[RMDB]
RNA sequence: GGGAACGACUCGAGUAGAGUCGAAAAGGAUUGGUUCGCCAAUCCAAAUCCUAAGUCCACAGCGAUGAGUGAUUAUGACAUCGAUCGUAGUCGGAAACGACUACGGGAGUCAGAAUCACGAGCUGUGGAUAUGGAAAAAUCGAUCGUUCGCGAUCGACUCGUAUAAUAAGUUCGCUUAUUAUACGAGAAAAGAAACAACAACAACAAC
Reactivity to 2A3 in 0.01 (KOAc 150mM, MgCl2 10mM, bicine 150mM(pH8.5), 24C), signal-to-noise 9, nucleotides 027 to 156: g000g000a010u010u020g020g040u070u130c300g030c080c000a000a000u000c000c000a050a030a010u010c010c000u030a100a040g020u000c000c000a000c000a000g000c020g250a300u170g140a180g090u000g000a000u000u060a030u040g040a010c100a300u160c090g120a060u080c010g020u000a000g000u000c000g010g000a060a090a060c010g000a000c000u000a000c000g000g010g000a010g000u000c000a000g030a030a010u000c000a000c000g010a010g000c000u000g000u000g000g000a000u000a010u010g010g020a050a080a010a060a030u080c000g000a000u020c010g040u140u080c290g000c020g120a000u000c000g010a020
Reactivity to DMS in 0.01 (KOAc 150mM, MgCl2 10mM, bicine 150mM(pH8.5), 24C), signal-to-noise 4, nucleotides 027 to 156: g010g000a010u000u000g000g030u000u000c300g050c020c010a010a000u000c000c000a020a030a060u000c000c000u000a110a220g000u000c000c000a020c000a010g020c000g000a180u010g000a280g020u010g010a030u000u000a040u000g010a020c000a210u000c140g000a120u000c000g010u000a010g030u000c000g010g010a180a150a260c000g020a030c000u000a020c000g000g000g010a060g020u000c000a010g010a050a030u000c000a010c010g010a090g020c000u000g020u010g000g020a000u000a040u000g020g000a010a100a080a090a150u000c010g010a050u000c000g010u000u010c300g030c040g020a020u000c010g020a030
Background
This 207-nucleotide RNA was probed chemically with 2A3 and DMS. 2A3 adducts were read by reverse transcription with SuperScript II with manganese. The RNA was probed in 150 mM KOAc, 10 mM MgCl2 and 150 mM bicine (pH 8.5) at 24 C. For DMS the reverse transcriptase was MarathonRT. For DMS, 16,283 sequencing reads were counted. Reactivities are rounded to 0.1 and cut off at 0 and 3. Source: RMDB library RNAMAK, as collected in RNAgym.